[RMDB]
RNA sequence: GGGAACGACUCGAGUAGAGUCGAAAAGUAGUACACAUGCAUGACUCGUCUACUGAUCUAUGUCAUGAUCCAUGCGACUAGUACUCUAGACUAGCUACCAUGUGACUAGUCGCAUCUAGACUAGAGGUGACUUGCGUCGUUUCGACGACGCAAGUCAAAAAGAAACAACAACAACAAC
Reactivity to 2A3 in 0.01 (KOAc 150mM, MgCl2 10mM, bicine 150mM(pH8.5), 24C), signal-to-noise 2, nucleotides 027 to 126: g040u040a000g020u120a040c030a000c000a050u000g160c050a070u080g020a220c120u020c040g110u000c100u170a130c090u100g040a100u020c010u060a040u300g050u000c000a020u130g030a050u070c070c000a030u010g000c000g010a020c040u010a000g030u020a270c000u000c110u080a050g020a110c080u070a040g010c000u050a070c050c070a130u150g040u040g010a000c000u020a010g010u010c020g000c010a010u010c010u040a000g000a030c000u010a000g010a000g100g040
Reactivity to DMS in 0.01 (KOAc 150mM, MgCl2 10mM, bicine 150mM(pH8.5), 24C), signal-to-noise 1, nucleotides 027 to 126: g030u000a020g000u000a130c110a090c140a090u000g020c090a100u020g000a120c020u010c300g000u000c000u000a060c080u000g080a050u000c030u010a000u000g030u020c050a100u030g000a100u010c170c240a050u000g010c000g000a000c020u000a020g010u000a090c020u000c030u000a020g000a180c130u020a120g010c270u000a100c090c060a040u030g000u020g020a050c020u000a060g020u000c000g000c040a000u000c120u030a060g000a020c010u000a040g000a030g000g030